RNA sequence: GGGAACGACUCGAGUAGAGUCGAAAAGACACUAGGUUCGCCUAGUGUCAAAAAGAUAUGGAGUAUACUACUUUUGACGGAACUGUGUAUCGGAAACGAUACCAGUUCCGAUAAGUAGUACUCCUAAGUCAAAAAUCGCCCAGUUCGCUGGGCGAAACGUAGCAGUAGUCUUCGGACUACUGCUACGAAAAGAAACAACAACAACAAC
Reactivity to 2A3 in 0.01 (KOAc 150mM, MgCl2 10mM, bicine 150mM(pH8.5), 24C), signal-to-noise 2, nucleotides 027 to 156: g000a000c000a000c000u000a000g000g050u020u090c250g130c030c000u010a010g020u000g000u000c000a000a000a000a000a000g010a000u020a020u030g000g010a010g010u100a020u020a240c010u000a000c030u060u140u130u070g240a190c100g000g020a000a000c000u010g050u030g000u300a000u000c000g000g020a040a010a090c010g010a000u000a000c020c000a010g010u000u020c000c000g000a000u000a000a000g000u000a010g000u000a000c000u000c000c000u000a030a040g010u010c030a090a000a000a000a300u040c000g010c000c000c000a000g020u030u070c260g000c090u000g000g020g020c000g000a000a000a000

Structure probing data (2A3) for a 207-nucleotide construct. Reactivities are rounded to 0.1 and cut off at 0 and 3. Conditions: 150 mM KOAc, 10 mM MgCl2 and 150 mM bicine (pH 8.5), 24 C. 2A3 adducts were read by reverse transcription with SuperScript II with manganese. The data come from the RNA Mapping Database (RMDB), library RNAMAK. Reactivities are given for positions 27 through 156.